[RMDB]
RNA sequence: GGGAACGACUCGAGUAGAGUCGAAAACAGGCACAGUUCGCUGUGCCUGAAAAGUGCAGGCUUAGCACAAUAAGCCAAAAAGAUCAUGAAAAUGAUCUAAAAAAACGUGAGCGUUCGCGCUCACGAACUAGCAUUAAUGCUUCGGCAUUAAUGCUAGAAAAGAAACAACAACAACAAC
Reactivity to DMS in 0.01 (KOAc 150mM, MgCl2 10mM, bicine 150mM(pH8.5), 24C), signal-to-noise 2, nucleotides 027 to 126: c000a020g000g010c000a010c020a010g020u010u020c170g020c010u010g000u020g000c000c000u010g000a040a030a060a090g030u000g020c030a160g030g000c010u000u000a030g020c010a140c180a070a090u000a010a010g000c000c020a090a050a120a120a010g000a000u000c000a000u000g000a170a050a110a000u000g010a010u000c010u010a000a000a090a040a030a040a120c010g010u000g000a010g000c000g010u010u000c130g030c000g000c010u000c000a010c000g010a020a080
Reactivity to 2A3 in 0.01 (KOAc 150mM, MgCl2 10mM, bicine 150mM(pH8.5), 24C), signal-to-noise 2, nucleotides 027 to 126: c000a000g000g020c020a020c010a000g000u060u070c140g030c110u010g000u010g000c000c000u000g000a000a010a000a010g110u110g020c050a030g040g020c000u030u030a030g030c020a000c010a270a180u050a020a000g000c000c000a060a010a010a020a000g000a000u000c000a000u020g050a030a050a010a010u000g000a000u000c010u030a130a050a010a000a000a010a010c010g010u010g000a010g000c020g000u070u110c260g050c000g030c060u010c000a010c010g000a000a020
This 177-nucleotide RNA was probed chemically with DMS and 2A3. Conditions: 150 mM KOAc, 10 mM MgCl2 and 150 mM bicine (pH 8.5), 24 C. For 2A3, 4,010 sequencing reads were counted. For DMS the reverse transcriptase was MarathonRT. Source: RMDB library M2PK50, as collected in RNAgym. For DMS, 1,713 sequencing reads were counted.